This 177-nucleotide RNA was probed chemically with DMS and 2A3. For DMS the reverse transcriptase was MarathonRT. The reactions ran in a buffer of 150 mM KOAc, 10 mM MgCl2 and 150 mM bicine (pH 8.5), at 24 C. For 2A3, 1,182 sequencing reads were counted. The DMS profile rests on 2,053 reads. Values cover nucleotides 27 to 126. For 2A3 the reverse transcriptase was SuperScript II with manganese.

RNA sequence: GGGAACGACUCGAGUAGAGUCGAAAAGAAAGAAAAUCGGACAACCAAACUGAAGAAUGCCGUGUAAGGUUGUAACGGCAUAAACGUCUCGAAAGAGUAAAAGAAGCUCAAAACGAGACCAAAGAAAGCUACUACCGAUAUUCGUAUCGGUAGUAGCAAAAGAAACAACAACAACAAC
Reactivity to DMS in 0.01 (KOAc 150mM, MgCl2 10mM, bicine 150mM(pH8.5), 24C), signal-to-noise 2, nucleotides 027 to 126: g000a120a050a080g000a090a030a200a200u000c060g000g010a080c130a050a140c000c040a100a090a100c060u020g050a180a100g000a070a000u010g050c000c020g000u000g000u000a070a050g010g000u000u000g010u010a030a010c020g020g000c010a000u000a010a160a100c190g020u000c000u000c000g000a000a120a300g000a010g040u010a090a050a080a080g000a090a230g000c040u000c010a010a070a050a100c020g000a000g000a000c000c250a050a050a060g010a020a040a120
Reactivity to 2A3 in 0.01 (KOAc 150mM, MgCl2 10mM, bicine 150mM(pH8.5), 24C), signal-to-noise 2, nucleotides 027 to 126: g040a010a060a000g150a030a020a010a080u010c040g070g000a040c000a070a010c100c030a080a130a000c070u190g070a090a000g100a070a110u000g010c000c000g000u000g060u000a160a050g060g000u030u000g030u000a000a050c000g000g000c000a000u000a000a010a000c030g000u010c020u000c000g010a080a120a090g010a030g000u120a100a040a130a040g120a210a040g020c000u000c000a110a110a030a030c050g010a000g000a000c000c040a000a170a000g060a020a040a020